Annotation
This 177-nucleotide RNA was probed chemically with 2A3 and DMS. It was measured as part of the RMDB libraries RFM100 and RFMREP. Conditions: 150 mM KOAc, 10 mM MgCl2 and 150 mM bicine (pH 8.5), 24 C.
RNA sequence: GGGAACGACUCGAGUAGAGUCGAAAAGGGGCCCGACUGUUUAAUAAAAACAUAGCUCUCUGCUAGCCCGUAAGGGUGUGUACAGAGGGCGACACCUGCCCAGUGCUGGCACGUGAAGCUGGAGUUCUAUCUCCAGUAGUUUCGACUACUGGAGAUAAAAAGAAACAACAACAACAAC
Reactivity to 2A3 in 0.01 (KOAc 150mM, MgCl2 10mM, bicine 150mM(pH8.5), 24C), signal-to-noise 7, nucleotides 027 to 126: g010g000g020g010c020c010c000g070a050c060u050g140u080u060u060a260a170u160a080a170a020a010a010c040a030u090a040g000c010u000c000u000c000u020g010c010u020a040g000c000c010c020g040u090a150a190g000g000g000u040g010u020g000u030a050c000a000g000a000g000g000g000c000g000a000c000a030c000c020u050g000c010c000c000a030g040u070g050c060u050g040g000c020a010c040g070u070g060a060a040g000c040u030g020g020a080g030u070u050c020
Reactivity to DMS in 0.01 (KOAc 150mM, MgCl2 10mM, bicine 150mM(pH8.5), 24C), signal-to-noise 5, nucleotides 027 to 126: g000g000g010g010c030c030c070g020a110c170u000g000u000u000u010a070a130u030a060a070a040a040a050c040a080u020a170g010c000u000c010u000c000u000g000c030u000a300g020c000c000c000g010u040a110a120g010g000g000u000g020u010g010u020a140c000a010g000a020g000g000g000c000g000a090c100a080c030c030u000g000c020c010c030a120g020u020g000c040u000g010g000c020a050c120g000u000g020a080a080g010c030u020g000g000a130g010u020u010c070